[RMDB]
RNA sequence: GGGAACGACUCGAGUAGAGUCGAAAAGAUAUGGAUCAGUAGGGAGGAGAAGUAUCGGAAACGAUACCUCCGACGAUCUACUGAGUCCUAAGUCAAACGCUCUAGAUAGUUCGCUAUCUAGAGCGAACCGUUUAAAUGACUUCGGUCAUUUAAACGGAAAAGAAACAACAACAACAAC
Reactivity to DMS in 0.01 (KOAc 150mM, MgCl2 10mM, bicine 150mM(pH8.5), 24C), signal-to-noise 2, nucleotides 027 to 126: g010a030u000a230u010g010g010a250u000c000a020g020u000a010g010g010g020a040g010g000a020g020a100a130g000u000a000u010c000g000g000a070a080a150c000g010a010u000a020c010c010u000c000c020g010a030c300g000a020u020c010u010a010c000u000g000a040g000u000c000c000u000a050a090g000u000c020a120a110a130c010g010c000u000c000u000a010g010a000u000a000g010u000u010c240g030c000u000a000u000c010u000a000g000a000g010c000g000a010a030
Reactivity to 2A3 in 0.01 (KOAc 150mM, MgCl2 10mM, bicine 150mM(pH8.5), 24C), signal-to-noise 2, nucleotides 027 to 126: g020a010u050a010u100g020g000a020u000c000a000g020u020a010g010g050g040a040g000g040a020g050a300a160g140u000a000u000c000g000g010a060a020a030c000g000a000u010a000c000c000u010c000c020g010a030c010g000a020u070c000u000a010c000u000g020a010g120u060c000c010u020a040a030g050u050c040a120a090a100c020g000c000u010c000u010a010g000a010u000a000g020u080u080c300g000c200u000a000u000c000u010a000g020a000g000c000g000a000a000